[RMDB]
An RNA of 170 nucleotides, treated with DMS and 2A3 and read out base by base. The reactions ran in a buffer of 150 mM KOAc, 10 mM MgCl2 and 150 mM bicine (pH 8.5), at 24 C. 2A3 adducts were read by reverse transcription with SuperScript II with manganese. For DMS the reverse transcriptase was MarathonRT. It was measured as part of the RMDB library 15KLIB.

RNA sequence: GGGAACGACUCGAGUAGAGUCGAAAAUAAGUGUGAUAGAGCUAUGCCUAAUAUGUGUAGAAUCUUCGCUUCACUCAUAUUAGCUCGUAAACAUGGCACUUGUUGUACUACAAGGGACAGAUUUUAUAUGCUCCUCCGUUCGCGGAGGAGAAAAGAAACAACAACAACAAC
Reactivity to DMS in 0.01 (KOAc 150mM, MgCl2 10mM, bicine 150mM(pH8.5), 24C), signal-to-noise 3, nucleotides 027 to 129: u020a010a140g020u000g050u010g000a040u020a090g000a110g000c070u030a000u040g030c300c070u040a000a000u020a030u010g010u030g000u020a110g050a000a000u000c110u060u040c240g010c170u030u010c040a070c000u020c000a000u010a030u020u010a030g010c020u020c090g000u000a030a070a180c020a080u020g000g030c050a060c000u010u020g050u030u000g010u000a120c140u020a000c200a090a060g010g000g000a000c080a040g030a170u000u000u000u000a070u050a050u060g030
Reactivity to 2A3 in 0.01 (KOAc 150mM, MgCl2 10mM, bicine 150mM(pH8.5), 24C), signal-to-noise 4, nucleotides 027 to 129: u080a010a020g050u050g000u000g170a100u050a110g090a000g000c020u040a030u150g070c010c000u000a010a020u040a010u020g030u010g010u000a090g020a000a010u050c110u120u090c140g040c040u000u010c010a000c010u000c000a000u020a030u040u020a010g000c020u010c060g020u050a030a090a070c070a060u040g040g000c010a010c000u000u000g010u020u100g010u080a060c060u080a010c000a040a050g030g000g020a000c030a030g070a050u050u040u040u080a190u030a050u150g030